Structure probing data (DMS) for a 177-nucleotide construct. Values are in units of 0.01, from 0 to 300, in steps of 10.
[RMDB]
RNA sequence: GGGAACGACUCGAGUAGAGUCGAAAAGAUGGGGCACGUCUCAUUUAUAAAGAAUUUUGAGGCACUUGGCGUGGAUGCAAGAAGGGGCAGCUGCCAGCCUGGCAGAGGAGGAGAAAGUAGAGAAACCCAGAUCGACUACGUUCGCGUAGUCGAUCUGAAAAGAAACAACAACAACAAC
Reactivity to DMS in 0.01 (KOAc 150mM, MgCl2 10mM, bicine 150mM(pH8.5), 24C), signal-to-noise 1, nucleotides 027 to 126: g000a100u010g010g010g000g040c050a090c120g000u000c030u000c020a030u010u030u000a130u010a120a070a090g010a120a140u000u010u010u020g010a060g010g020c020a180c060u010u000g000g020c120g000u010g000g010a160u000g020c080a050a070g020a100a090g010g010g040g010c040a070g000c040u000g020c020c030a100g000c140c040u000g050g020c040a020g000a050g020g010a100g000g020a130g010a000a120a120g000u020a090g000a130g010a100a040a110c080c140
High DMS reactivity at an A or C suggests that its Watson-Crick edge is free. Conditions: 150 mM KOAc, 10 mM MgCl2 and 150 mM bicine (pH 8.5), 24 C. For DMS, 709 sequencing reads were counted. For DMS the reverse transcriptase was MarathonRT.